[RMDB]
RNA sequence: GGGAACGACUCGAGUAGAGUCGAAAAGCGUGAUUAGGGAUAAUUAUUAAUCUGUAAUCCCGCGAAGAGAACAGGGCCCAAUUAUUAACCGGGGCCCAUGGACGAAUUUUAAGUCCUCACACGCGAACAUCACUAGGGUGUUCGCACCCUAGUGAUGAAAAGAAACAACAACAACAAC
Reactivity to DMS in 0.01 (KOAc 150mM, MgCl2 10mM, bicine 150mM(pH8.5), 24C), signal-to-noise 3, nucleotides 027 to 126: g010c020g000u000g030a010u000u020a050g010g020g010a040u000a080a090u020u020a160u000u000a140a050u000c040u010g000u000a000a040u000c000c040c010g000c090g000a160a130g000a140g010a090a140c090a070g000g000g010c000c010c000a110a060u010u010a100u000u000a140a100c180c130g010g000g000g030c000c000c010a010u020g000g010a020c020g000a090a130u020u010u010u000a070a150g000u000c000c000u000c180a060c110a030c150g010c100g000a080a180
Reactivity to 2A3 in 0.01 (KOAc 150mM, MgCl2 10mM, bicine 150mM(pH8.5), 24C), signal-to-noise 2, nucleotides 027 to 126: g000c000g000u020g000a040u000u050a070g000g010g030a000u010a150a040u280u250a030u240u160a160a020u020c020u020g300u080a000a020u030c030c010c020g000c000g010a080a020g150a030g000a100a090c070a220g000g010g010c000c000c000a000a050u120u120a110u120u120a100a010c020c050g020g010g040g110c000c000c000a000u000g000g000a000c020g000a030a050u030u160u140u250a290a030g030u000c000c000u000c030a100c000a030c060g100c060g030a020a010